[RMDB]
RNA sequence: GGGAACGACUCGAGUAGAGUCGAAAAGGUGAUGAACAUCAUCAAUGCGAACUCCAAGUCCGACGAGGAGACCGAGAUCAUCGUGGGCACGGCCGAGGAUCCCGAGAUGGAGGACUGGGUGGUGGUCAGCCACCCGGUCUUUCGAGACCGGGUGGCUAAAAGAAACAACAACAACAAC
Reactivity to DMS in 0.01 (KOAc 150mM, MgCl2 10mM, bicine 150mM(pH8.5), 24C), signal-to-noise 1, nucleotides 027 to 126: g020g010u000g020a080u000g000a160a110c080a120u000c000a010u000c000a100a110u010g020c050g010a090a170c040u000c020c050a100a190g000u000c020c030g020a100c090g000a240g020g000a040g000a090c050c020g010a050g020a090u000c050a050u000c020g020u000g000g030g000c020a040c050g010g020c090c010g020a070g010g000a130u000c010c040c010g010a090g000a120u000g000g030a090g020g000a000c060u030g000g000g050u000g000g000u010g010g020u000c270